[RMDB]
RNA sequence: GGGAACGACUCGAGUAGAGUCGAAAAGAUAUGGAGACUCAAUUCUUUGGCUCGAAGAACAGCGUCGGAAACGACGCUGGGAGAGCGAAUUGAGGUCUCCUAAGUCAAAGCAUCAGUUCGCUGAUGCGGAACGUAUCGUGUUCGCACGAUACGUUCCAAAAGAAACAACAACAACAAC
Reactivity to 2A3 in 0.01 (KOAc 150mM, MgCl2 10mM, bicine 150mM(pH8.5), 24C), signal-to-noise 2, nucleotides 027 to 126: g040a000u070a070u200g000g010a010g010a000c000u010c020a020a000u100u000c090u300u300u300g250g000c000u010c010g220a300a050g000a060a020c010a010g010c020g030u010c000g010g020a050a050a000c000g000a000c000g000c020u000g000g000g000a030g000a010g020c120g030a000a010u000u010g030a060g030g060u000c000u010c000c000u000a050a010g010u000c070a190a130a000g000c000a020u030c000a000g090u060u190c270g000c120u010g000a000u010g010c000
Reactivity to DMS in 0.01 (KOAc 150mM, MgCl2 10mM, bicine 150mM(pH8.5), 24C), signal-to-noise 2, nucleotides 027 to 126: g020a070u000a300u000g010g020a030g000a180c000u010c000a010a040u000u010c080u000u010u010g040g040c000u000c010g000a110a240g020a170a220c000a000g020c000g040u010c000g010g010a090a070a190c000g030a030c000g040c000u020g010g000g000a130g000a010g020c020g020a020a020u000u010g000a030g010g010u000c000u000c000c000u010a010a050g000u000c030a130a140a130g000c000a010u000c000a000g000u000u000c300g020c000u000g000a020u000g000c000
Description
An RNA of 177 nucleotides, treated with 2A3 and DMS and read out base by base. For 2A3 the reverse transcriptase was SuperScript II with manganese. The reactions ran in a buffer of 150 mM KOAc, 10 mM MgCl2 and 150 mM bicine (pH 8.5), at 24 C.